[RMDB]
RNA sequence: GGGAACGACUCGAGUAGAGUCGAAAAGUCUGCGGGUAGGGAGCUGGAGCCGGCUGGUAACAGCCGGCCUAGAGGAAUGGUUGUCACGCACCGUUUGCCGCAAGGCGGGCGGGGCGCACAGAAUCCGACAAUUACAAACGUUCGCGUUUGUAAUUGUAAAAGAAACAACAACAACAAC
Reactivity to DMS in 0.01 (KOAc 150mM, MgCl2 10mM, bicine 150mM(pH8.5), 24C), signal-to-noise 3, nucleotides 027 to 126: g010u010c020u000g010c020g010g010g000u030a040g000g000g010a090g010c020u010g000g010a120g020c000c010g010g000c010u000g000g000u040a140a170c010a010g000c000c010g030g000c000c010u020a010g020a090g010g010a070a100u020g000g000u020u000g020u000c130a170c020g020c010a030c000c000g000u000u000u010g000c000c000g000c220a100a120g010g030c000g010g000g030c010g010g000g010g020c000g020c220a030c080a120g000a100a070u010c040c040g020
Reactivity to 2A3 in 0.01 (KOAc 150mM, MgCl2 10mM, bicine 150mM(pH8.5), 24C), signal-to-noise 2, nucleotides 027 to 126: g060u040c040u030g010c020g020g020g020u040a070g060g000g040a060g060c050u050g040g000a010g010c010c020g000g010c020u000g000g060u080a160a090c000a000g000c000c000g000g000c000c010u020a020g010a010g010g080a070a120u100g070g020u090u000g030u100c050a010c020g000c000a000c000c010g000u010u020u030g000c000c000g000c060a020a050g000g000c000g020g000g010c000g010g020g010g000c010g000c020a030c020a050g080a040a070u030c010c020g000
This 177-nucleotide RNA was probed chemically with DMS and 2A3. The reactions ran in a buffer of 150 mM KOAc, 10 mM MgCl2 and 150 mM bicine (pH 8.5), at 24 C. The 2A3 profile rests on 1,699 reads. Reactivities are given for positions 27 through 126. DMS adducts were read by reverse transcription with MarathonRT.